[RMDB]
RNA sequence: GGGAACGACUCGAGUAGAGUCGAAAAGAAAAGAACAUUGUCUAUGAUGAACUGAAAUCUUUAGAUAUUACAAUCAUUGAGUCACAGGAUUCAUAUAAAAAUAAAUUGAAGAGAUUAUUUUCGGUUCCUUCCUGAGGACGUUCGCGUCCUCAGGAAGAAAAGAAACAACAACAACAAC
Reactivity to 2A3 in 0.01 (KOAc 150mM, MgCl2 10mM, bicine 150mM(pH8.5), 24C), signal-to-noise 1, nucleotides 027 to 126: g020a000a030a020a000g120a070a040c220a170u290u130g080u110c060u070a040u130g050a030u070g010a080a120c000u050g010a070a000a060u000c050u030u180u000a120g000a110u080a070u040u030a120c120a100a040u070c010a030u020u000g000a000g050u010c000a070c050a160g080g070a000u030u000c070a000u130a000u170a180a080a000a030a000u250a020a070a120u090u000g010a010a000g030a000g000a040u040u050a160u190u300u000u000c020g050g000u070u010c000
Source: RMDB library OK1LIB, as collected in RNAgym. The record gives the reactivity of an RNA of 177 nucleotides to 2A3. For 2A3, 277 sequencing reads were counted. 2A3 adducts were read by reverse transcription with SuperScript II with manganese. The reactions ran in a buffer of 150 mM KOAc, 10 mM MgCl2 and 150 mM bicine (pH 8.5), at 24 C.